[RMDB]
RNA sequence: GGGAACGACUCGAGUAGAGUCGAAAAUGAGCUGGAAGAUAUCUUCAACCUCCUCUGGGCUGACAUUUUUUCCGCCUUCGGUAACAAUAAUGUUUUUCGAUCGCCCUGUAAUGUAGACAUAACCAUCAAUAUAGAGGAGGUUCGCCUCCUCUAUAUUAAAAGAAACAACAACAACAAC
Reactivity to DMS in 0.01 (KOAc 150mM, MgCl2 10mM, bicine 150mM(pH8.5), 24C), signal-to-noise 7, nucleotides 027 to 126: u010g000a090g020c050u000g010g000a050a150g010a100u000a070u010c070u000u000c040a080a220c050c010u000c070c050u000c060u010g010g000g020c030u000g000a060c230a010u000u000u000u010u010u000c030c050g010c080c050u000u000c040g010g010u010a040a050c080a060a100u000a070a070u000g000u000u000u000u000u010c050g010a050u010c110g010c010c030c030u000g000u000a050a060u000g000u010a050g010a080c060a050u010a080a120c050c050a080u010c120
Reactivity to 2A3 in 0.01 (KOAc 150mM, MgCl2 10mM, bicine 150mM(pH8.5), 24C), signal-to-noise 2, nucleotides 027 to 126: u060g010a020g010c030u030g040g000a000a040g020a080u060a070u210c050u080u050c000a040a060c020c000u010c000c040u060c050u080g000g040g000c010u050g020a000c020a040u010u090u010u000u060u010c000c030g050c040c020u030u080c020g040g010u090a030a010c010a000a060u180a160a050u080g060u000u060u000u040u080c060g030a060u050c040g020c030c000c000u000g040u060a120a120u140g030u040a030g000a060c060a020u090a030a010c050c060a090u300c030

Conditions: 150 mM KOAc, 10 mM MgCl2 and 150 mM bicine (pH 8.5), 24 C. The record gives the reactivity of an RNA of 177 nucleotides to DMS and 2A3. 2A3 adducts were read by reverse transcription with SuperScript II with manganese.